[RMDB]
Chemical mapping of a 177-nucleotide RNA with DMS. DMS (dimethyl sulfate) methylates the pairing face of unpaired adenines and cytosines.
RNA sequence: GGGAACGACUCGAGUAGAGUCGAAAAUCGUGAAGAGUCGAAGACCUCGUUCGUCCUUGAUCACAAGCGACUUUAGGGUGAGAUCGACCAGGUUGGGGCUCUGAAGGGUGAUCCAGCAGACUUGGGCAUUGUAUGGCAGCUUCGGCUGCCAUACAAUAAAAGAAACAACAACAACAAC
Reactivity to DMS in 0.01 (KOAc 150mM, MgCl2 10mM, bicine 150mM(pH8.5), 24C), signal-to-noise 1, nucleotides 027 to 126: u040c030g010u020g000a170a200g030a110g000u000c000g000a110a130g000a140c130c000u000c110g060u000u010c090g000u010c090c010u000u010g000a110u000c140a040c100a110a160g020c110g050a040c050u000u000u010a100g000g010g010u010g000a230g010a040u010c070g010a080c090c090a010g010g020u000u040g010g000g100g010c010u000c020u000g010a080a090g000g020g000u010g030a090u010c000c020a100g040c210a090g000a150c030u000u000g000g000g000c090
The RNA was probed in 150 mM KOAc, 10 mM MgCl2 and 150 mM bicine (pH 8.5) at 24 C. For DMS, 676 sequencing reads were counted.